Overview: Conditions: 150 mM KOAc, 10 mM MgCl2 and 150 mM bicine (pH 8.5), 24 C. Chemical mapping of a 177-nucleotide RNA with DMS and 2A3. DMS (dimethyl sulfate) methylates the pairing face of unpaired adenines and cytosines. For DMS the reverse transcriptase was MarathonRT. The 2A3 profile rests on 26,350 reads.
[RMDB]
RNA sequence: GGGAACGACUCGAGUAGAGUCGAAAACUAUGUACAGACAGUACAGUGGAUAAGGUCUAUCGAUAUCCAACUUAAACAAUGGUACUUGCAGUGGUAUCUAUCAAGAUAGGCAGGCUAUCAUAGAAAGAAGAUGUAUAUUAUUCGUAGUAUACAUCUUAAAAGAAACAACAACAACAAC
Reactivity to DMS in 0.01 (KOAc 150mM, MgCl2 10mM, bicine 150mM(pH8.5), 24C), signal-to-noise 9, nucleotides 027 to 126: c020u000a060u020g010u000a010c010a140g020a130c240a120g010u000a000c010a030g000u000g000g010a070u010a060a080g000g010u020c070u010a010u020c050g000a070u010a020u000c000c010a060a130c090u010u020a000a060a060c130a050a040u000g000g000u000a010c010u000u010g020c120a130g010u040g010g010u000a000u000c010u010a060u030c180a090a060g010a040u000a010g000g010c120a060g000g010c150u000a010u000c010a020u000a040g010a050a090a080g010
Reactivity to 2A3 in 0.01 (KOAc 150mM, MgCl2 10mM, bicine 150mM(pH8.5), 24C), signal-to-noise 3, nucleotides 027 to 126: c010u020a040u050g010u000a010c020a080g230a050c020a010g040u010a000c000a000g010u040g060g020a040u020a100a030g060g010u010c020u020a030u040c010g020a020u000a010u020c010c010a030a050c020u040u080a000a010a010c020a030a060u040g020g000u020a010c000u030u070g040c040a040g020u030g080g000u040a000u000c030u020a070u040c040a050a000g000a020u000a000g000g010c010a000g020g000c010u000a000u010c000a010u020a030g050a020a110a010g120